[RMDB]
RNA sequence: GGGAACGACUCGAGUAGAGUCGAAAACUAUGGUGUUGAAGAGGCUGAUGAACUACGUGACAAGCUGUUCGAGGAAUGGGGCAGACCAGCGACGCACCCACUACUGUACCACUAUGCGCGCGUCGUAAUUCUGAGUGGUAUUCGUACCACUCAGAAUAAAAGAAACAACAACAACAAC
Reactivity to 2A3 in 0.01 (KOAc 150mM, MgCl2 10mM, bicine 150mM(pH8.5), 24C), signal-to-noise 3, nucleotides 027 to 126: c040u030a110u150g050g000u050g020u070u230g070a100a030g050a050g080g000c050u050g010a100u070g030a130a030c020u110a060c140g120u070g090a030c050a090a020g030c020u040g050u100u060c050g060a040g010g050a140a070u120g000g020g020g000c000a020g000a070c000c010a020g000c010g050a010c010g000c040a050c000c020c010a010c040u150a030c040u060g050u110a050c030c010a010c060u090a050u140g050c090g010c010g000c010g060u020c020g000u030a020
Reactivity to DMS in 0.01 (KOAc 150mM, MgCl2 10mM, bicine 150mM(pH8.5), 24C), signal-to-noise 6, nucleotides 027 to 126: c050u000a080u010g010g030u000g010u000u000g000a080a090g010a100g010g010c030u010g010a110u010g010a080a090c070u010a060c120g000u010g020a080c110a070a100g010c030u000g000u000u000c070g000a100g000g020a070a090u000g000g010g010g000c050a060g010a100c060c070a090g000c010g000a050c060g010c050a130c020c020c030a050c150u000a060c100u000g010u000a080c110c040a050c090u010a050u000g000c180g010c060g000c030g030u000c040g020u000a070